[RMDB]
RNA sequence: GGGAACGACUCGAGUAGAGUCGAAAACUCUGCGGCACGGGUGUCGUAGAGAGUAUCCGACGUCAGUUGGGUAAGCAGAACACCAUCGAUAGGGGAGAUGGUGGACCCACUCUUCUCUCGUGCUCACGUGGGUUGAGUGCGUCAAACUACCCCGCAGGGAUGGUGGCGCGUUCGCGUGCCACUGUUCAAAAGAAACAACAACAACAAC
Reactivity to 2A3 in 0.01 (KOAc 150mM, MgCl2 10mM, bicine 150mM(pH8.5), 24C), signal-to-noise 8, nucleotides 027 to 156: c000u000c000u000g000c000g010g000c010a020c110g290g100g130u050g000u010c000g000u010a000g000a000g000a010g020u020a030u010c010c010g020a010c020g070u210c100a140g010u020u030g030g000g000u030a090a030g070c080a030g080a110a030c010a010c010c000a010u030c020g080a160u180a220g000g010g000g010a030g000a010u020g010g000u010g010g010a000c050c050c010a000c000u000c000u020u000c010u000c010u010c000g010u050g090c120u160c170a010c010g010u020g000g010g000u000u000g000a000g000u000g000c020g000u010c000a030a040a040c050u140a100c000c000c000c000g010c050a080g050
Reactivity to DMS in 0.01 (KOAc 150mM, MgCl2 10mM, bicine 150mM(pH8.5), 24C), signal-to-noise 5, nucleotides 027 to 156: c010u000c000u000g000c020g010g000c000a090c060g020g030g020u010g040u000c010g030u000a020g000a030g030a130g020u000a040u000c010c000g010a040c030g010u010c250a140g010u000u010g010g020g020u000a040a120g030c060a140g010a120a170c040a090c010c010a060u000c040g010a150u000a090g010g010g020g020a280g020a060u000g000g010u000g010g010a030c010c020c010a040c030u000c010u000u000c000u000c010u000c020g030u000g010c180u000c080a050c040g020u010g000g010g010u000u000g000a030g030u000g010c100g000u000c020a060a060a030c030u000a050c010c000c000c010g020c090a190g010
The record gives the reactivity of an RNA of 207 nucleotides to 2A3 and DMS. The RNA was probed in 150 mM KOAc, 10 mM MgCl2 and 150 mM bicine (pH 8.5) at 24 C. Values are in units of 0.01, from 0 to 300, in steps of 10. 2A3 is a SHAPE reagent: it acylates the 2'-hydroxyl of flexible nucleotides of all four kinds. The 2A3 profile rests on 16,969 reads.